[RMDB]
RNA sequence: GGGAACGACUCGAGUAGAGUCGAAAACAUCAAAGACAUGGGAUUUACCGUAUUUCCAAUGGGUGAAACAACAAAAUAAUGAUUAUUAUCAACGGGUUAGCCAUAUGGAUAAUGAUUCUAAUAAAGGAUACUUGCGAACAUUCGUGUUCGCAAGUAUAAAAGAAACAACAACAACAAC
Reactivity to DMS in 0.01 (KOAc 150mM, MgCl2 10mM, bicine 150mM(pH8.5), 24C), signal-to-noise 1, nucleotides 027 to 126: c060a070u000c170a080a130a020g000a080c030a090u010g000g000g000a010u000u040u010a020c080c060g000u000a190u000u040u050c020c000a040a000u050g020g000g000u000g000a080a000a060c080a060a110c140a060a070a060a150u030a000a030u010g000a080u000u000a050u020u000a020u020c030a070a100c190g000g040g020u010u010a160g000c010c000a000u010a050u000g000g000a010u000a060a000u010g020a000u000u000c020u000a060a160u060a010a110a040g000g000
Reactivity to 2A3 in 0.01 (KOAc 150mM, MgCl2 10mM, bicine 150mM(pH8.5), 24C), signal-to-noise 2, nucleotides 027 to 126: c000a060u010c010a000a110a220g180a110c050a130u140g010g000g080a070u050u050u100a090c020c010g030u130a180u030u040u060c010c100a020a020u080g090g080g000u130g040a010a160a050c070a010a000c080a010a090a090a110u120a120a000u160g030a040u000u040a010u060u050a000u180c030a090a080c070g000g000g050u030u170a060g000c040c000a000u010a160u060g030g010a010u000a060a020u030g010a040u020u000c010u130a060a200u090a170a120a000g090g000
This 177-nucleotide RNA was probed chemically with DMS and 2A3.
The DMS profile rests on 1,555 reads.
Reactivities are given for positions 27 through 126.
The RNA was probed in 150 mM KOAc, 10 mM MgCl2 and 150 mM bicine (pH 8.5) at 24 C.
For 2A3 the reverse transcriptase was SuperScript II with manganese.